[RMDB]
RNA sequence: GGGAACGACUCGAGUAGAGUCGAAAACGAAGCUAGUUUCGACUAGCUUCGAAAAAACCUUUGUGUAUGGGCAACGAAGAACGGUCAGGCCCAUUGGGCCUGCGCCGGGAGUUGCCAUACACUCUGGUAAAAAGGAAAUGUAUUCGUACAUUUCCAAGCAUAACUCACGGUUCGCCGUGAGUUAUGCAAAAGAAACAACAACAACAAC
Reactivity to 2A3 in 0.01 (KOAc 150mM, MgCl2 10mM, bicine 150mM(pH8.5), 24C), signal-to-noise 1, nucleotides 027 to 156: c000g000a000a000g000c000u020a000g040u040u110u120c300g100a050c000u000a010g010c000u000u010c000g000a000a000a000a000a000a000c020c010u040u000u000g000u000g020u000a010u050g190g190g000c000a000a000c010g150a220a030g020a090a010c010g020g000u050c000a010g010g000c030c000c070a110u050u240g010g000g010c040c000u020g000c100g000c030c000g020g000g000a070g000u000u010g000c010c000a000u010a000c000a000c000u000c000u000g000g000u140a160a170a110a050a020g000g010a020a000a000u000g010u020a030u070u150c280g060u060a000c000a000u000u000u000c000c000a000a000
Conditions: 150 mM KOAc, 10 mM MgCl2 and 150 mM bicine (pH 8.5), 24 C.
Chemical mapping of a 207-nucleotide RNA with 2A3.
2A3 is a SHAPE reagent: it acylates the 2'-hydroxyl of flexible nucleotides of all four kinds.
2A3 adducts were read by reverse transcription with SuperScript II with manganese.